An RNA of 177 nucleotides, treated with DMS and 2A3 and read out base by base. Values cover nucleotides 27 to 126. The DMS profile rests on 867 reads. The RNA was probed in 150 mM KOAc, 10 mM MgCl2 and 150 mM bicine (pH 8.5) at 24 C. The data come from the RNA Mapping Database (RMDB), library RFMREP.
RNA sequence: GGGAACGACUCGAGUAGAGUCGAAAAGGUGGUGAUUAUUAUCCCACCGUGCGGGGCUGCACUUGGACGAAGAAUGGCUUAGAAAUCAAGGCCUGAUUCAAGAAAACCCCCGCACCGAAAGGUCGGGCCUACAAGUUCUCUUCGGAGAACUUGUAGGAAAAGAAACAACAACAACAAC
Reactivity to DMS in 0.01 (KOAc 150mM, MgCl2 10mM, bicine 150mM(pH8.5), 24C), signal-to-noise 2, nucleotides 027 to 126: g010g050u010g000g030u010g000a010u000u000a110u000u040a190u000c020c000c020a030c020c040g000u000g010c040g010g000g000g010c040u030g010c300a140c010u010u000g000g010a000c070g010a190a200g000a150a080u000g040g000c000u000u000a090g000a080a150a090u010c120a200a230g010g010c000c000u010g000a300u000u010c030a040a030g000a080a160a100a140c230c000c000c000c000g010c000a000c010c020g000a090a100a040g010g000u000c050g000g000g000
Reactivity to 2A3 in 0.01 (KOAc 150mM, MgCl2 10mM, bicine 150mM(pH8.5), 24C), signal-to-noise 1, nucleotides 027 to 126: g050g000u030g000g050u200g170a030u030u300a090u180u130a030u090c000c000c000a000c000c010g020u010g000c020g010g000g020g000c040u090g000c040a000c090u000u000g010g010a020c030g050a100a080g120a200a070u100g000g000c020u020u010a010g070a110a280a080u250c090a060a100g010g000c000c010u080g090a200u010u030c010a010a010g050a000a020a010a010c000c000c000c010c000g000c000a000c000c020g050a060a000a000g010g030u070c000g010g020g050